[RMDB]
RNA sequence: GGGAACGACUCGAGUAGAGUCGAAAAUGAUCGAGAGAUCUAAGUAUGUACGCGAGUCAAGUGCACAGACUCGAGCGAAAGCUCGGUCGAAAGACCGCGUACAUGUGUCGGCAAGUGUACAGUCGAAAAUAUAUCCGUAUUUCGAUACGGAUAUAUUAAAAGAAACAACAACAACAAC
Reactivity to 2A3 in 0.01 (KOAc 150mM, MgCl2 10mM, bicine 150mM(pH8.5), 24C), signal-to-noise 8, nucleotides 027 to 126: u100g000a000u010c010g000a010g000a010g000a100u000c000u020a060a020g090u060a060u050g000u000a000c000g000c000g010a010g010u010c030a150a190g020u010g040c020a010c010a030g000a000c010u010c040g000a000g000c010g050a130a010a010g000c000u000c000g010g000u000c000g010a030a010a000g000a000c000c000g000c000g000u000a000c000a000u010g010u010g050u010c010g000g010c040a180a250g010u010g000u030a020c020a010g010u000c010g010a070a050
Reactivity to DMS in 0.01 (KOAc 150mM, MgCl2 10mM, bicine 150mM(pH8.5), 24C), signal-to-noise 9, nucleotides 027 to 126: u010g000a010u000c000g010a270g000a240g000a010u000c000u000a080a140g010u000a040u000g010u000a000c000g020c000g010a030g010u000c000a040a060g020u000g000c020a010c020a300g000a010c000u000c010g010a010g010c000g010a120a100a170g010c000u000c000g000g000u000c000g000a100a080a140g000a010c000c000g010c000g000u000a000c000a000u000g010u010g010u000c020g010g000c010a040a080g010u000g000u000a010c010a300g000u000c010g000a050a110